[RMDB]
RNA sequence: GGGAACGACUCGAGUAGAGUCGAAAACAUCUAAAUAUGAUCUUGAGUACGCAGACGUGCCACAGAACAUGCGGGCCGAUACAUUCAAGUACACCCAUGAGAAACCCCAAGGCUACUAUAGUUGGCACUAUUUCAAGAUAUUCGUAUCUUGAAAUAGAAAAGAAACAACAACAACAAC
Reactivity to 2A3 in 0.01 (KOAc 150mM, MgCl2 10mM, bicine 150mM(pH8.5), 24C), signal-to-noise 4, nucleotides 027 to 126: c010a040u050c030u190a080a140a140u230a140u150g050a080u050c010u040u060g020a020g020u050a020c050g000c080a030g060a160c030g070u080g020c020c000a050c020a050g100a140a050c020a050u060g020c080g030g000g000c040c020g010a010u030a060c030a020u040u130c050a060a010g030u050a020c020a030c030c020c010a030u070g050a040g070a140a080a050c020c000c010c010a030a020g070g000c020u040a030c000u060a110u070a300g050u080u060g030g000c020a000
Reactivity to DMS in 0.01 (KOAc 150mM, MgCl2 10mM, bicine 150mM(pH8.5), 24C), signal-to-noise 7, nucleotides 027 to 126: c080a090u000c060u000a080a070a100u030a070u010g010a220u010c030u000u000g000a090g010u000a070c110g030c080a050g010a120c080g020u000g010c020c030a060c090a070g010a090a090c140a070u000g010c070g000g000g030c030c040g000a120u000a030c070a090u010u000c080a030a060g000u000a090c160a060c010c020c010a080u010g000a080g000a090a100a150c040c010c010c040a080a130g010g000c010u000a020c070u010a070u000a040g010u000u000g010g000c050a220